[RMDB]
RNA sequence: GGGAACGACUCGAGUAGAGUCGAAAACACCAAUUAUAGUGGAGCUUUUUGGUUAAGUACUUCCCCCUUGCGAGCAACAGGUGUCGUCCUGUUUGUUAGCCCUGCGCGGUUUCGUCCGUGUAGUGAUCGUUGCGCUACAUUUCGAUGUAGCGCAACGAAAAGAAACAACAACAACAAC
Reactivity to 2A3 in 0.01 (KOAc 150mM, MgCl2 10mM, bicine 150mM(pH8.5), 24C), signal-to-noise 2, nucleotides 027 to 126: c060a070c010c000a010a020u160u060a120u050a220g090u160g160g040a130g100c020u020u000u000u040u060g000g010u050u120a080a070g090u040a090c030u000u050c000c000c000c020c110u030u110g000c000g000a060g000c000a000a000c000a000g020g010u090g190u220c130g000u110c000c000u000g000u090u040u040g000u000u010a000g010c000c000c000u000g000c000g000c020g000g070u010u250u090c200g070u000c000c000g030u030g000u000a000g030u020g040a010u030
Chemical mapping of a 177-nucleotide RNA with 2A3.
For 2A3 the reverse transcriptase was SuperScript II with manganese.
The reactions ran in a buffer of 150 mM KOAc, 10 mM MgCl2 and 150 mM bicine (pH 8.5), at 24 C.
For 2A3, 662 sequencing reads were counted.